An RNA of 207 nucleotides, treated with 2A3 and read out base by base. The reactions ran in a buffer of 150 mM KOAc, 10 mM MgCl2 and 150 mM bicine (pH 8.5), at 24 C.
[RMDB]
RNA sequence: GGGAACGACUCGAGUAGAGUCGAAAACAUGCGAAAGGAUGGCGUCUAUCCGGCUGCAUGCGAAAGGAUGGUUCUCCUCAGUCGCAACUACCGGCAUGCGAAAGGAUGGGCAACGUGUACGUCUGACUGGAUGGGAAAGCAUGCUCGACAGUAGCCAGGCGGAUAGGUAGUUCGCUACCUAUCCGCCAAAAGAAACAACAACAACAAC
Reactivity to 2A3 in 0.01 (KOAc 150mM, MgCl2 10mM, bicine 150mM(pH8.5), 24C), signal-to-noise 2, nucleotides 027 to 156: c010a060u070g010c020g060a150a030a010g060g030a070u070g080g080c070g040u050c020u090a020u010c000c000g000g060c020u070g000c020a010u030g010c010g040a160a010a040g070g020a070u100g000g090u040u030c020u100c050c100u130c040a080g080u140c020g000c080a010a040c020u110a040c020c010g000g000c000a040u010g010c010g110a170a000a000g050g030a060u040g030g000g000c020a030a020c020g050u080g040u090a030c050g000u000c040u030g030a090c020u050g030g040a050u040g150g060g000a060a110a000g030c010a000u070g000c000u000c020g040a070c010a000g000u040a030g100c040c010a030